[RMDB]
The data come from the RNA Mapping Database (RMDB), library M2PK50.
Structure probing data (DMS and 2A3) for a 177-nucleotide construct.
For 2A3 the reverse transcriptase was SuperScript II with manganese.
For 2A3, 1,905 sequencing reads were counted.
For DMS the reverse transcriptase was MarathonRT.
The reactions ran in a buffer of 150 mM KOAc, 10 mM MgCl2 and 150 mM bicine (pH 8.5), at 24 C.
Reactivities are rounded to 0.1 and cut off at 0 and 3.
RNA sequence: GGGAACGACUCGAGUAGAGUCGAAAACGUGCCAUGUUCGCAUGGCACGAAAUAAAGGAAACAGGAAGGCAUCCGCGCACGAUGUAACAAGCGCAAAAUAAAAAACAUUUCACUUCGGUGAAAUGAAUCGUCUUACUAUCUUCGGAUAGUAAGACGAAAAAGAAACAACAACAACAAC
Reactivity to DMS in 0.01 (KOAc 150mM, MgCl2 10mM, bicine 150mM(pH8.5), 24C), signal-to-noise 2, nucleotides 027 to 126: c010g040u000g020c010c000a000u000g010u000u020c210g020c020a010u000g030g000c000a000c010g000a010a030a090u000a050a140a100g000g000a080a060a070c140a040g010g000a050a060g000g000c040a040u000c030c140g020c060g000c020a080c080g010a070u000g000u000a060a040c090a070a100g000c020g040c050a070a060a040a060u040a010a080a050a080a070a100c000a010u000u000u000c000a000c000u000u000c130g010g020u010g000a000a000a000u000g000a040a080
Reactivity to 2A3 in 0.01 (KOAc 150mM, MgCl2 10mM, bicine 150mM(pH8.5), 24C), signal-to-noise 2, nucleotides 027 to 126: c010g030u000g000c000c000a010u020g000u010u040c130g000c160a010u000g000g000c000a010c000g000a010a000a010u150a020a090a000g160g040a060a050a000c090a050g040g060a060a010g070g030c030a010u030c020c040g000c020g010c000a010c080g040a020u120g010u180a090a060c040a170a050g000c030g000c000a030a050a060a040u130a020a110a000a000a010a000c000a000u010u010u000c010a000c020u010u100c220g160g010u010g030a010a000a000u020g040a000a070